[RMDB]
RNA sequence: GGGAACGACUCGAGUAGAGUCGAAAAAACAAAAAUAACUGUAAACAACGCAGAUUACGCUCCAGCUUACGCUAAAGCUGCGUGAGUUAAUCUCCUUUUGGAGCUGGACUGAUUAGAAUUUCUAGCGUUUUAAUCGCUCCAUAACCUUAAGCUAGACCCGAUGAUUAAUCUUCGGAUUAAUCAUCGGAAAAGAAACAACAACAACAAC
Reactivity to 2A3 in 0.01 (KOAc 150mM, MgCl2 10mM, bicine 150mM(pH8.5), 24C), signal-to-noise 3, nucleotides 027 to 156: a000a000c160a070a080a050a010a010u220a070a040c010u010g020u090a220a200a110c050a080a030c120g000c000a010g040a110u080u110a050c060g000c000u000c000c000a000g000c000u000u000a000c000g000c000u070a200a160a210g160c240u080g000c020g000u000g000a010g010u000u080a050a090u060c050u070c060c000u030u110u100u080g000g010a000g000c020u010g000g000a010c000u010g010a010u000u000a000g010a010a010u090u100u000c010u010a000g000c000g010u000u000u000u000a000a010u020c010g020c050u000c010c020a090u120a220a100c020c030u180u110a070a010g000c000u010a000g000a000c000
Overview:
This 207-nucleotide RNA was probed chemically with 2A3. Values cover nucleotides 27 to 156. 2A3 adducts were read by reverse transcription with SuperScript II with manganese.